Structure probing data (DMS and 2A3) for a 177-nucleotide construct.

RNA sequence: GGGAACGACUCGAGUAGAGUCGAAAAUCAAUGGGGAAGCGUUAUUACUCAAGGAACGAUAAGUGAGGGUAGUACUGCUAACACCAUUUGUGAUUUAUCACACUCCGCACCGCUGCUUCCUUGUGGACACGUUCAACAACUUCGGUUGUUGAACGUGAAAAGAAACAACAACAACAAC
Reactivity to DMS in 0.01 (KOAc 150mM, MgCl2 10mM, bicine 150mM(pH8.5), 24C), signal-to-noise 2, nucleotides 027 to 126: u000c080a070a060u000g000g000g010g030a180a040g010c000g040u010u000a020u000u000a020c000u000c000a120a170g000g040a100a080c050g010a120u020a110a200g000u000g000a170g020g010g000u000a020g020u000a030c010u000g000c010u000a090a180c080a120c050c010a000u000u000u000g020u000g010a060u010u000u000a070u000c060a070c050a090c100u000c000c030g000c050a030c050c020g000c020u000g000c070u000u010c000c000u000u000g030u000g010g020a120
Reactivity to 2A3 in 0.01 (KOAc 150mM, MgCl2 10mM, bicine 150mM(pH8.5), 24C), signal-to-noise 2, nucleotides 027 to 126: u020c000a040a020u020g000g000g020g050a000a020g070c010g020u010u020a020u030u010a060c020u020c010a070a110g250g020a110a060c070g060a120u100a300a070g030u050g070a060g020g040g020u020a040g000u000a010c020u040g020c000u010a020a010c060a020c040c010a000u030u060u060g030u030g010a050u040u080u060a170u080c040a020c000a000c060u000c000c000g000c000a040c020c000g010c060u050g020c020u060u040c020c000u010u060g090u050g070g030a000
Record summary
The RNA was probed in 150 mM KOAc, 10 mM MgCl2 and 150 mM bicine (pH 8.5) at 24 C. 2A3 adducts were read by reverse transcription with SuperScript II with manganese. Source: RMDB library RFMREP, as collected in RNAgym.